[RMDB]
This 207-nucleotide RNA was probed chemically with 2A3.
RNA sequence: GGGAACGACUCGAGUAGAGUCGAAAAUCUAAAUAGGAAAGCAGACACUUCUUCCAGAUCAUGCAUACUCUUACACUUUGCUGGGUUAGGGCGAGCUCAUUUCCUAAAUACCCUUUGAGUUGCCCUCCUUUUCUUAUGGAGACAACUGGACGUUCAAGCUACUGGAGUAGUUCGCUACUCCAGUAGCAAAAGAAACAACAACAACAAC
Reactivity to 2A3 in 0.01 (KOAc 150mM, MgCl2 10mM, bicine 150mM(pH8.5), 24C), signal-to-noise 1, nucleotides 027 to 156: u020c010u040a040a000a070u190a040g020g000a020a010a000g000c090a080g050a080c040a060c140u110u050c020u030u020c010c000a020g010a280u020c010a040u120g050c020a040u080a290c010u030c000u220u130a090c000a030c220u180u030u170g070c030u090g000g040g000u060u080a010g000g000g000c020g010a010g000c020u040c080a020u030u030u000c000c000u060a170a120a000u130a100c020c000c000u030u000u050g100a010g000u000u020g040c060c010c020u050c010c000u120u110u090u090c040u150u080a090u150g030g000a020g000a010c010a000a060c020u020g000g060a020c070g070u080u240c110a060a000